[RMDB]
RNA sequence: GGGAACGACUCGAGUAGAGUCGAAAAGCCUUUACGUUCGCGUAAAGGCAAAGGAGGCUCGAGUCUGUGUGUGCGUAACGAGCCUCCACGCACACACACACAAAACCCUGCUGUUCGCAGCAGGGAAGACGUUACGAAGGUUCGCCUUCGUAACGUCAAAAGAAACAACAACAACAAC
Reactivity to 2A3 in 0.01 (KOAc 150mM, MgCl2 10mM, bicine 150mM(pH8.5), 24C), signal-to-noise 1, nucleotides 027 to 126: g000c000c000u020u000u000a030c020g030u020u070c220g010c010g140u000a000a000a010g000g030c000a010a010a000g000g000a040g020g010c000u000c010g010a000g020u000c030u020g000u020g010u010g000u010g000c010g000u040a210a130c090g020a080g160c040c040u020c010c020a000c000g010c000a000c010a000c000a000c000a000c000a000c020a000a090a030a030c000c000c000u010g010c000u010g030u070u080c230g000c120a000g010c000a000g000g040g000a000a030
Reactivity to DMS in 0.01 (KOAc 150mM, MgCl2 10mM, bicine 150mM(pH8.5), 24C), signal-to-noise 1, nucleotides 027 to 126: g010c020c010u000u000u000a010c000g010u000u010c280g020c000g020u000a000a030a000g000g010c010a000a010a120g000g020a060g000g030c000u000c000g000a040g010u000c040u000g000u000g020u000g010u000g010c030g000u020a050a100c220g000a110g000c110c010u010c030c040a020c000g000c000a010c000a030c000a000c010a050c120a080c110a120a060a080a070c030c000c000u000g020c000u000g000u000u010c170g040c010a020g010c020a000g000g000g000a000a000
An RNA of 177 nucleotides, treated with 2A3 and DMS and read out base by base. Source: RMDB library M2PK50, as collected in RNAgym. The RNA was probed in 150 mM KOAc, 10 mM MgCl2 and 150 mM bicine (pH 8.5) at 24 C. The DMS profile rests on 1,008 reads.